RNA sequence: GGGAACGACUCGAGUAGAGUCGAAAAUGUGGUUCCUUCGGGAACCACACACUACCGAGAAUGAUCCUCGGUAUAUAAAUCAAACCCUUGGAAACAUGGGAACACUCCCUAGCUUCGGCUAGGGAAAUCUAAUUAUACACUUCGGUGUAUAAUUAGAAAAAGAAACAACAACAACAAC
Reactivity to 2A3 in 0.01 (KOAc 150mM, MgCl2 10mM, bicine 150mM(pH8.5), 24C), signal-to-noise 3, nucleotides 027 to 126: u060g000u010g010g000u010u010c010c000u010u040c190g010g010g000a000a010c000c000a000c000a000c000a010c000u020a000c000c010g010a010g030a090a270u220g040a110u100c020c000u010c010g010g000u000a000u010a000u010a040a000a010u080c060a050a050a300c000c000c000u020u020g020g030a060a030a010c000a020u020g000g000g030a060a010c030a020c040u020c000c000c000u000a010g000c000u040u040c300g090g000c000u000a010g000g000g000a000a000a000
Reactivity to DMS in 0.01 (KOAc 150mM, MgCl2 10mM, bicine 150mM(pH8.5), 24C), signal-to-noise 6, nucleotides 027 to 126: u000g030u000g010g010u000u000c000c000u000u010c200g030g020g000a010a000c000c000a000c000a000c100a110c070u000a000c000c000g010a010g010a120a160u010g000a150u010c110c010u000c000g000g000u000a000u000a030u010a030a050a040u000c160a070a130a160c000c000c000u000u000g000g000a150a100a180c000a010u000g000g000g000a130a080c190a110c150u000c000c000c000u000a010g010c000u000u010c200g020g010c000u000a000g000g000g000a000a000a020
Chemical mapping of a 177-nucleotide RNA with 2A3 and DMS. As a SHAPE reagent, 2A3 marks flexible, mostly unpaired nucleotides at the ribose 2'-OH. Values cover nucleotides 27 to 126. 2A3 adducts were read by reverse transcription with SuperScript II with manganese.